[RMDB]
RNA sequence: GGGAACGACUCGAGUAGAGUCGAAAAGAUAUGGAAUACCCUGCAGGCAACAGCCUACGGACUCGGAAACGAGUUUAGGACAUGCCUGAAGGUAUUCCUAAGUCAAAGAAUCGGUUCGCCGAUUCAACAGCAUGGUGUCCUUCGGGACACCAUGCUGAAAAGAAACAACAACAACAAC
Reactivity to DMS in 0.01 (KOAc 150mM, MgCl2 10mM, bicine 150mM(pH8.5), 24C), signal-to-noise 1, nucleotides 027 to 126: g000a110u000a300u030g000g000a030a040u000a000c040c000c040u000g020c030a010g000g010c000a000a110c210a210g030c010c000u000a030c300g010g000a000c000u000c000g040g010a160a190a240c000g010a030g000u000u000u000a000g000g000a090c090a210u010g000c000c000u000g000a120a130g000g000u000a030u000u000c000c000u000a010a050g030u000c030a100a060a120g000a000a000u000c000g000g000u000u010c300g010c000c000g000a000u000u000c010a090a230
Overview
This 177-nucleotide RNA was probed chemically with DMS. DMS adducts were read by reverse transcription with MarathonRT. The data come from the RNA Mapping Database (RMDB), library TTRDES. The RNA was probed in 150 mM KOAc, 10 mM MgCl2 and 150 mM bicine (pH 8.5) at 24 C.